Source: RMDB library OK3TST, as collected in RNAgym.
Chemical mapping of a 207-nucleotide RNA with 2A3.
For 2A3 the reverse transcriptase was SuperScript II with manganese.

RNA sequence: GGGAACGACUCGAGUAGAGUCGAAAAUUUCGUAUUAAUGGGCUUGGUGUCACCAUGGAUGUGCUAAGUCAAAACCAAAAGCUUAUUGCUAAUGCAUUUAACAAUGCCCUUGAUGCUAUUCAGGAGGGGUUUGAUGCAACCAAUUCUGCUUUAGCUACGUAGUCCGGGUAUUCGUACCCGGACUACGAAAAGAAACAACAACAACAAC
Reactivity to 2A3 in 0.01 (KOAc 150mM, MgCl2 10mM, bicine 150mM(pH8.5), 24C), signal-to-noise 1, nucleotides 027 to 156: u000u040u020c090g040u100a070u070u090a100a010u300g000g000g070c040u030u010g050g000u090g010u080c000a020c020c040a090u160g080g000a070u060g040u010g000c000u010a010a010g000u000c000a000a000a060a130c060c040a120a100a030a000g000c010u060u130a010u080u200g060c020u100a050a140u100g020c010a000u000u050u090a050a060c070a070a090u160g040c000c000c000u030u020g030a090u030g010c040u160a050u030u070c020a010g000g130a010g000g010g000g040u010u040u110g080a040u090g000c010a040a020c000c010a010a010u060u030c000u010g010c010u010u000u000a000g000c010u070a030